[RMDB]
Conditions: 150 mM KOAc, 10 mM MgCl2 and 150 mM bicine (pH 8.5), 24 C.
Chemical mapping of a 207-nucleotide RNA with DMS and 2A3.
The DMS profile rests on 2,470 reads.
The 2A3 profile rests on 3,151 reads.
For DMS the reverse transcriptase was MarathonRT.
RNA sequence: GGGAACGACUCGAGUAGAGUCGAAAAGAGGCGAAAUAAUUCCCAUCUCCUCUGUACGGCCGGAGAUGGGUCUGGCCGUACUAAUAAGCCUCAUAGUGACGAGAGUCACGAAUUCUGGAUAGCCUUUGGUAGUCGGCUAUCCUAUGACUACCGUAGACCCUAAUAUGCGUUUCGACGCAUAUUAGGGAAAAGAAACAACAACAACAAC
Reactivity to DMS in 0.01 (KOAc 150mM, MgCl2 10mM, bicine 150mM(pH8.5), 24C), signal-to-noise 1, nucleotides 027 to 156: g000a020g010g000c000g020a090a100a080u000a070a210u000u000c030c010c010a200u000c040u000c030c030u000c140u010g010u000a030c030g040g060c020c060g090g000a040g010a110u000g000g000g010u000c010u000g000g010c000c020g050u000a120c050u010a050a040u000a060a260g030c040c000u020c000a110u000a240g010u010g010a000c010g030a290g000a290g000u000c010a040c000g020a180a060u000u000c060u000g030g000a180u000a040g020c020c000u010u000u000g000g000u000a050g030u000c080g000g020c020u000a060u010c090c020u010a030u000g000a050c010u000a000c010c010g030u020a130g000a180
Reactivity to 2A3 in 0.01 (KOAc 150mM, MgCl2 10mM, bicine 150mM(pH8.5), 24C), signal-to-noise 4, nucleotides 027 to 156: g000a000g010g010c020g040a060a060a040u150a050a060u090u020c010c010c010a030u050c070u050c010c040u100c080u060g000u010a000c010g000g000c010c000g020g010a020g030a110u300g060g060g040u010c000u000g000g000c000c000g000u000a010c000u010a010a030u050a030a000g000c000c000u010c010a030u080a040g030u010g000a010c010g010a000g000a020g110u000c000a000c010g000a050a050u170u040c020u060g060g000a030u030a010g010c000c000u070u080u080g080g030u080a070g060u100c020g000g010c010u010a030u040c000c010u020a050u030g010a010c020u040a050c030c050g030u030a040g090a120